[RMDB]
RNA sequence: GGGAACGACUCGAGUAGAGUCGAAAAAAGCGAUUACCUAAGCUCAGCGAUUGUCAAACAGAACGUAGAUUAACUGCCGCUAAUCACUCCACAAUGUUGAGCCGACUCUCAACGGCUACUGCAUUACCGUGAAAGGGACGUUCGCGUCCCUUUCACGAAAAGAAACAACAACAACAAC
Reactivity to 2A3 in 0.01 (KOAc 150mM, MgCl2 10mM, bicine 150mM(pH8.5), 24C), signal-to-noise 3, nucleotides 027 to 126: a010a000g150c060g000a070u130u140a110c000c040u030a040a000g000c000u030c060a000g010c010g130a110u070u070g010u070c080a080a000a070c060a020g130a020a020c020g110u160a040g000a100u050u070a030a040c020u040g040c050c000g000c030u020a050a000u100c000a000c010u000c000c000a020c070a100a010u070g000u030u010g000a010g010c010c030g080a070c000u070c020u000c050a000a090c020g000g000c000u070a150c010u130g050c000a020u010u050a090c060
Reactivity to DMS in 0.01 (KOAc 150mM, MgCl2 10mM, bicine 150mM(pH8.5), 24C), signal-to-noise 2, nucleotides 027 to 126: a060a000g000c020g000a000u040u000a080c020c000u000a060a200g000c000u000c060a100g000c050g000a200u030u080g000u030c060a130a030a110c170a020g020a020a120c130g000u000a130g010a140u000u030a020a140c150u020g050c000c070g000c010u030a160a020u040c000a060c030u000c120c060a160c300a070a050u000g060u000u000g000a040g010c020c000g000a050c090u030c120u000c240a170a070c000g000g000c000u000a000c000u000g000c110a020u000u020a120c180